This 177-nucleotide RNA was probed chemically with DMS and 2A3. For 2A3 the reverse transcriptase was SuperScript II with manganese. It was measured as part of the RMDB libraries RFM100 and RFMREP. The reactions ran in a buffer of 150 mM KOAc, 10 mM MgCl2 and 150 mM bicine (pH 8.5), at 24 C. Reactivities are given for positions 27 through 126. For DMS the reverse transcriptase was MarathonRT. Values are in units of 0.01, from 0 to 300, in steps of 10.
[RMDB]
RNA sequence: GGGAACGACUCGAGUAGAGUCGAAAAGCAACUUCUAGCAGAAAAGGGUGUCAUCCGAGUAGCUAACACUGGGAUCCAGGAAACUUGAUUACAAAUAAAUAUGCUGUUUUAAUGAAUUUGUGUAAUACUAAACUGAAAAGUUCGCUUUUCAGUUUAGAAAAGAAACAACAACAACAAC
Reactivity to DMS in 0.01 (KOAc 150mM, MgCl2 10mM, bicine 150mM(pH8.5), 24C), signal-to-noise 6, nucleotides 027 to 126: g000c070a060a040c080u010u010c040u000a060g020c030a080g000a060a080a080a080g000g000g010u010g000u000c040a040u020c030c040g000a050g020u010a040g010c110u020a070a080c110a060c060u010g000g010g000a040u010c060c040a060g000g000a070a080a100c050u000u020g000a080u010u020a060c060a020a050a070u030a060a060a060u020a080u010g000c020u010g000u000u010u000u010a070a090u030g000a100a100u010u000u000g010u010g010u000a050a070u040a140
Reactivity to 2A3 in 0.01 (KOAc 150mM, MgCl2 10mM, bicine 150mM(pH8.5), 24C), signal-to-noise 7, nucleotides 027 to 126: g030c000a020a040c010u060u010c020u080a030g000c020a020g090a060a130a040a040g070g050g010u040g020u030c020a050u030c020c020g020a030g010u050a010g000c050u070a070a020c050a010c060u040g050g010g060a030u050c010c000a040g000g050a050a060a040c030u040u060g050a050u160u110a050c050a030a100a030u200a060a090a020u200a100u160g050c010u020g110u110u080u080u110a110a140u130g050a060a070u030u050u030g020u010g010u020a020a000u030a110